[RMDB]
Chemical mapping of a 177-nucleotide RNA with DMS and 2A3. Values cover nucleotides 27 to 126.
RNA sequence: GGGAACGACUCGAGUAGAGUCGAAAAUGGCAGUUAAAGAACAGAAACAGCAAUAAGACUGCGUGGCUACAUUUUCCCAGUGCCACCAACUGGGAUUUAAGCUGACUAACAUUUUGAAAGCCCAGCCUCCGGACUAUCUGUUCGCAGAUAGUCCGGAAAAAGAAACAACAACAACAAC
Reactivity to DMS in 0.01 (KOAc 150mM, MgCl2 10mM, bicine 150mM(pH8.5), 24C), signal-to-noise 2, nucleotides 027 to 126: u010g000g000c010a000g010u000u000a000a080a070g040a110a200c050a040g000a050a060a170c070a040g000c160a050a130u000a100a140g000a010c020u000g000c040g010u020g000g030c020u000a040c090a070u070u020u000u000c000c020c030a100g000u000g000c040c030a070c130c210a190a090c000u000g000g000g000a160u000u000u000a030a110g010c020u000g000a080c180u060a110a210c030a020u000u000u000u000g000a100a130a190g000c060c000c000a030g000c130c120
Reactivity to 2A3 in 0.01 (KOAc 150mM, MgCl2 10mM, bicine 150mM(pH8.5), 24C), signal-to-noise 3, nucleotides 027 to 126: u040g010g040c010a010g000u000u040a050a020a020g030a060a040c040a060g130a030a130a000c070a010g070c040a010a190u150a260a000g020a030c010u000g030c040g010u000g000g000c010u130a010c070a180u150u130u040u020c000c010c000a000g000u010g160c000c060a020c010c000a010a040c010u000g000g000g000a000u000u000u090a030a030g030c030u070g130a140c010u070a130a030c040a080u040u010u010u120g090a080a100a020g010c010c000c000a000g020c000c040